[RMDB]
RNA sequence: GGGAACGACUCGAGUAGAGUCGAAAAGAAAUUACGUUUUCUUUACACUUCUCAAACCGGGAUCAAGAGAAGCAAAGCAUCCCUCAUAUCCACGAUGGAGGGUGUCGUGGAGUAUACUGUACCAAAAAGAGCGAACACGGCUUCGGCCGUGUUCGAACUCAUUUAGCGAGUUCGCUCGCUAAAUGAGAAAAGAAACAACAACAACAAC
Reactivity to 2A3 in 0.01 (KOAc 150mM, MgCl2 10mM, bicine 150mM(pH8.5), 24C), signal-to-noise 4, nucleotides 027 to 156: g010a000a020a000u190u170a110c110g040u040u040u000u000c000u010u040u040a050c050a030c040u030u020c010u000c030a110a110a090c070c050g060g030g040a060u100c060a200a040g010a020g010a040a020g010c100a070a040a020g020c010a080u050c000c020c000u060c030a080u130a030u060c010c010a000c020g010a010u040g110g080a050g040g070g020u070g000u000c010g000u000g000g000a000g020u000a020u010a070c130u120g100u140a080c030c080a050a050a030a040a030g120a060g080c000g000a000a000c000a000c010g000g000c020u030u060c170g040g000c000c000g010u000g000u000u000c000g000a000a000
Reactivity to DMS in 0.01 (KOAc 150mM, MgCl2 10mM, bicine 150mM(pH8.5), 24C), signal-to-noise 1, nucleotides 027 to 156: g000a030a030a040u000u010a110c180g000u000u000u000u000c000u010u000u000a140c060a100c030u000u000c000u010c010a030a130a190c100c040g010g000g020a180u010c090a030a270g000a040g020a020a020g030c040a190a050a130g040c060a140u000c000c000c060u020c090a070u010a150u000c000c000a020c040g000a050u000g020g010a090g000g030g000u000g020u010c030g050u000g020g000a050g020u000a140u000a060c080u000g020u000a140c050c060a040a020a070a060a140g000a230g010c000g020a010a020c010a000c010g030g080c000u010u010c300g090g000c020c000g000u010g010u070u000c000g000a010a010
An RNA of 207 nucleotides, treated with 2A3 and DMS and read out base by base.
For 2A3 the reverse transcriptase was SuperScript II with manganese.